[RMDB]
RNA sequence: GGGAACGACUCGAGUAGAGUCGAAAAGAUAUGGAUGCCAGCGACGAUCUACCACUCGGAAACGAGUGUGUAGGGAGCUGAGUCCUAAGUCAAAACUUAGGUUGGUCCUUCGGGACCAACCUAAGAAUCUGUACUUGGAGUUCGCUCCAAGUACAGAAAAAGAAACAACAACAACAAC
Reactivity to DMS in 0.01 (KOAc 150mM, MgCl2 10mM, bicine 150mM(pH8.5), 24C), signal-to-noise 1, nucleotides 027 to 126: g000a060u000a300u000g010g050a030u000g010c270c030a000g020c000g000a050c190g000a000u010c020u000a010c010c000a000c010u000c020g010g010a070a050a180c000g010a000g000u000g000u010g000u000a030g000g000g010a060g040c000u000g010a300g010u000c000c020u000a020a200g010u000c030a130a060a060a160c000u000u020a010g000g000u000u000g000g000u010c020c000u010u000c230g040g000g000a000c020c000a000a000c010c000u000a030a000g000a150a070
Source: RMDB library TTRDEL, as collected in RNAgym. The record gives the reactivity of an RNA of 177 nucleotides to DMS. DMS adducts were read by reverse transcription with MarathonRT. The reactions ran in a buffer of 150 mM KOAc, 10 mM MgCl2 and 150 mM bicine (pH 8.5), at 24 C.